Chemical mapping of a 207-nucleotide RNA with 2A3 and DMS. For DMS the reverse transcriptase was MarathonRT. For DMS, 2,619 sequencing reads were counted. The data come from the RNA Mapping Database (RMDB), library RNAMAK. Values cover nucleotides 27 to 156. The RNA was probed in 150 mM KOAc, 10 mM MgCl2 and 150 mM bicine (pH 8.5) at 24 C. Reactivities are rounded to 0.1 and cut off at 0 and 3.
RNA sequence: GGGAACGACUCGAGUAGAGUCGAAAAGGGGUCGAUCCGAUGGUAGUGUAAGGGAGUCUCGGAGGGCUGAAGCCUCCACGGCCUGACGAGACAUCGAUCUUACACGAGAGUAGGAUCGACGGAGGCACCCAAACGCUCUUGGUUCGCCAAGAGCGAAUCACUAUUAUGCCUUCGGGCAUAAUAGUGAAAAAGAAACAACAACAACAAC
Reactivity to 2A3 in 0.01 (KOAc 150mM, MgCl2 10mM, bicine 150mM(pH8.5), 24C), signal-to-noise 2, nucleotides 027 to 156: g130g010g050g010u010c000g000a010u000c000c010g070a160u130g200g070u070a040g000u000g010u030a000a010g000g000g010a000g000u000c000u000c010g000g000a030g000g010g020c000u000g010a090a000g000c010c000u000c000c000a000c000g020g000c000c000u000g000a010c000g000a000g010a000c010a010u270c030g000a010u000c000u010u000a000c000a000c010g010a020g010a010g000u040a000g040g000a000u000c000g000a000c000g010g000a000g000g000c010a020c000c000c000a030a070a040c020g000c000u000c000u020u000g020g040u110u090c240g050c100c000a000a000g020a000g000c000g010a000a020
Reactivity to DMS in 0.01 (KOAc 150mM, MgCl2 10mM, bicine 150mM(pH8.5), 24C), signal-to-noise 2, nucleotides 027 to 156: g030g000g010g000u010c020g020a040u010c000c000g030a240u030g030g020u020a150g010u010g000u000a010a060g000g000g000a190g010u000c030u010c010g000g000a300g010g020g000c000u030g000a030a130g030c030c010u010c010c030a300c030g000g020c010c000u000g000a300c000g000a060g010a020c000a070u000c080g020a030u000c010u000u000a010c000a030c020g010a260g010a150g010u000a120g030g020a000u000c000g000a000c000g010g050a060g030g000c030a070c010c020c000a020a130a200c090g000c010u010c010u030u030g010g020u010u000c300g090c020c000a030a050g020a030g030c050g000a030a060